[RMDB]
RNA sequence: GGGAACGACUCGAGUAGAGUCGAAAAGUCGUAUGACAUCCAUUGGAUUGUGUUAUAUGAUGUGGAUUAAUAGAAACAGUUGUGGGUAUUCAUAUUUCAUAGUGAGAGGUAAAAUUCUUGGAUCUAUCGAGUAUGUAUACUUCGGUAUACAUACUCGAAAAGAAACAACAACAACAAC
Reactivity to 2A3 in 0.01 (KOAc 150mM, MgCl2 10mM, bicine 150mM(pH8.5), 24C), signal-to-noise 1, nucleotides 027 to 126: g020u000c010g040u130a100u170g020a000c000a000u020c000c020a150u050u180g070g000a100u110u120g040u020g000u060u030a060u020a000u010g000a050u010g050u080g060g000a120u100u120a120a090u210a090g100a060a070a010c020a030g000u070u050g000u180g070g010g040u060a060u000u090c000a000u010a120u260u180u060c020a000u040a090g080u060g060a050g010a050g100g030u140a040a160a000a000u130u030c000u010u020g080g000a030u030c000u000a010u050
Reactivity to DMS in 0.01 (KOAc 150mM, MgCl2 10mM, bicine 150mM(pH8.5), 24C), signal-to-noise 1, nucleotides 027 to 126: g000u000c010g030u010a070u020g000a010c100a040u010c060c010a180u000u020g010g020a130u000u010g010u010g010u000u000a040u010a010u010g000a030u000g000u000g000g000a070u010u020a070a010u000a090g000a100a080a040c060a060g000u000u000g010u000g010g020g040u000a050u000u000c060a050u000a040u000u010u010c050a040u010a080g020u000g010a100g000a040g000g010u000a040a040a120a140u010u020c020u000u000g000g000a110u000c010u000a190u000

The data come from the RNA Mapping Database (RMDB), library RFMREP. An RNA of 177 nucleotides, treated with 2A3 and DMS and read out base by base.